[RMDB]
RNA sequence: GGGAACGACUCGAGUAGAGUCGAAAAGCAUUUCGCGUUGCGCAGCGAUCCAAAAUGCAGUUCCGGAGAACUCUGCGCGGCCUUCCGACAGAACCUUUCCGUCAGGUCCGUCGAUUCGAACGUGAACGCUAUGAGACUUUUUCGAAAGUCUCAUAGCAAAAGAAACAACAACAACAAC
Reactivity to 2A3 in 0.01 (KOAc 150mM, MgCl2 10mM, bicine 150mM(pH8.5), 24C), signal-to-noise 3, nucleotides 027 to 126: g030c040a060u020u070u050c020g010c010g030u040u100g040c060g000c040a030g000c010g030a080u000c030c030a050a050a030a070u140g000c040a040g040u080u010c030c010g000g020a080g020a040a020c050u040c010u070g020c030g010c000g020g000c000c020u090u090c090c050g020a010c000a030g040a100a110c050c070u080u190u080c040c000g030u040c010a000g030g000u000c020c020g050u020c030g070a080u080u060c010g030a070a030c020g040u080g050a040a020c060
Reactivity to DMS in 0.01 (KOAc 150mM, MgCl2 10mM, bicine 150mM(pH8.5), 24C), signal-to-noise 4, nucleotides 027 to 126: g010c020a100u010u010u000c020g010c100g010u000u000g020c010g030c070a090g010c070g010a090u010c090c080a070a070a070a060u000g010c020a110g010u000u000c030c030g010g000a110g000a060a060c090u010c030u000g000c000g010c020g020g010c020c020u000u010c150c060g020a060c050a060g020a030a110c160c110u010u000u000c030c040g010u000c060a060g000g010u000c010c000g020u000c230g000a170u000u010c020g010a050a050c020g020u000g010a030a080c300